[RMDB]
RNA sequence: GGGAACGACUCGAGUAGAGUCGAAAAAGGAUGGAGGAACAAUGUACGAUGCGCCCAUGGCCUUGCGUGCGCAUGACCGGGAUGAUACGCCGCGUCAGGUCGUGCCAGCCGAAGAAAUUGGCCUCGACCUUUUAAAAUGAUUCGUCAUUUUAAAAGGAAAAGAAACAACAACAACAAC
Reactivity to 2A3 in 0.01 (KOAc 150mM, MgCl2 10mM, bicine 150mM(pH8.5), 24C), signal-to-noise 9, nucleotides 027 to 126: a000g140g010a080u170g020g020a020g010g020a140a130c020a040a070u110g020u130a040c040g030a060u060g020c020g010c030c010c010a020u050g030g000c010c010u020u050g030c030g050u070g010c070g000c040a030u040g030a030c030c040g120g080g020a030u100g020a020u080a160c070g010c030c010g020c020g020u020c020a000g000g010u020c010g000u010g010c000c020a010g000c000c010g030a070a040g030a040a110a010u050u030g010g000c010c010u010c010g100a100
Reactivity to DMS in 0.01 (KOAc 150mM, MgCl2 10mM, bicine 150mM(pH8.5), 24C), signal-to-noise 9, nucleotides 027 to 126: a060g000g010a100u000g000g000a050g010g010a070a080c060a050a050u000g010u010a130c160g010a080u000g010c090g010c040c060c030a060u010g010g000c030c030u000u010g010c050g020u010g030c090g010c020a040u010g010a060c050c030g000g010g010a110u000g000a090u000a080c100g010c040c030g010c060g010u000c150a080g000g010u000c010g020u000g000c050c120a130g010c030c030g000a060a090g010a040a100a080u000u000g000g000c020c020u000c060g000a150

Structure probing data (2A3 and DMS) for a 177-nucleotide construct. It was measured as part of the RMDB library OK2TRN. Conditions: 150 mM KOAc, 10 mM MgCl2 and 150 mM bicine (pH 8.5), 24 C. For DMS, 46,226 sequencing reads were counted. For DMS the reverse transcriptase was MarathonRT. For 2A3 the reverse transcriptase was SuperScript II with manganese.